[RMDB]
RNA sequence: GGGAACGACUCGAGUAGAGUCGAAAAAGCCUAUCUCAGCCGAGUCAGAGACUCGGCGAAGAGUGCAAGAGCAUAAGAUAGGCUGACAGUGUCCUACACAACGAGGGACGCUGACGCGAAAGCGUGGAUGUUAAACUUGAUUCGUCAAGUUUAACAUAAAAGAAACAACAACAACAAC
Reactivity to 2A3 in 0.01 (KOAc 150mM, MgCl2 10mM, bicine 150mM(pH8.5), 24C), signal-to-noise 9, nucleotides 027 to 126: a000g000c000c000u000a000u010c010u040c060a010g000c000c000g000a000g010u010c090a080g100a020g000a300c000u000c000g010g000c000g000a010a010g050a020g010u020g000c030a230a150g040a080g170c010a020u020a100a010g000a000u000a000g000g000c000u000g010a000c000a000g000u000g000u000c000c010u110a050c080a010c010a140a250c120g090a210g010g010g000a000c000g000c000u030g040a020c000g010c000g050a120a020a020g000c010g010u030g060g060
Reactivity to DMS in 0.01 (KOAc 150mM, MgCl2 10mM, bicine 150mM(pH8.5), 24C), signal-to-noise 9, nucleotides 027 to 126: a020g010c000c000u000a000u000c000u000c120a210g010c000c000g010a010g010u000c010a270g020a250g000a030c000u000c000g010g000c000g000a040a050g000a240g030u000g000c020a200a130g020a150g010c010a010u010a090a070g000a010u000a000g000g000c000u000g000a180c020a010g000u010g010u000c000c000u000a160c130a140c260a100a110c230g010a300g000g000g000a010c000g010c000u000g000a030c000g000c000g000a120a080a120g010c000g010u000g010g010
Structure probing data (2A3 and DMS) for a 177-nucleotide construct. For DMS the reverse transcriptase was MarathonRT. The data come from the RNA Mapping Database (RMDB), libraries RFM100 and RFMREP. High DMS reactivity at an A or C suggests that its Watson-Crick edge is free.